[RMDB]
RNA sequence: GGGAACGACUCGAGUAGAGUCGAAAAGUACUGGUGUAAUUGAAAUUUCGCCAGGUUCGUAAAGUGGUUAGGCAAGUGUUGUGUGCCCUGUGUUUAAGUACUGGUGGUUCCGUCCACUGGUGCACUCGAGUUAUGUUAGCUUCGGCUAACAUAACUCAAAAGAAACAACAACAACAAC
Reactivity to DMS in 0.01 (KOAc 150mM, MgCl2 10mM, bicine 150mM(pH8.5), 24C), signal-to-noise 1, nucleotides 027 to 126: g000u000a120c050u000g010g030u010g000u030a020a020u020u000g010a060a120a190u000u000u000c010g040c020c020a040g000g000u010u010c030g010u010a060a050a140g010u000g000g000u000u000a080g000g000c080a070a060g010u010g000u010u000g000u000g030u000g000c020c020c030u000g020u040g000u010u020u030a070a080g030u000a020c000u000g000g020u000g000g020u000u020c250c160g010u020c000c000a010c010u000g020g000u000g020c000a060c170u020c150
Reactivity to 2A3 in 0.01 (KOAc 150mM, MgCl2 10mM, bicine 150mM(pH8.5), 24C), signal-to-noise 1, nucleotides 027 to 126: g040u020a000c040u080g000g000u080g050u210a030a070u000u120g240a220a100a110u020u030u030c000g000c000c000a030g000g040u020u040c060g150u130a070a000a070g020u020g080g000u130u190a070g000g010c000a070a070g110u110g020u070u000g040u010g090u100g000c020c030c020u030g020u030g010u020u060u030a070a020g020u000a000c000u000g000g000u000g000g000u070u210c060c030g090u090c030c050a000c000u010g000g000u000g000c020a100c000u070c080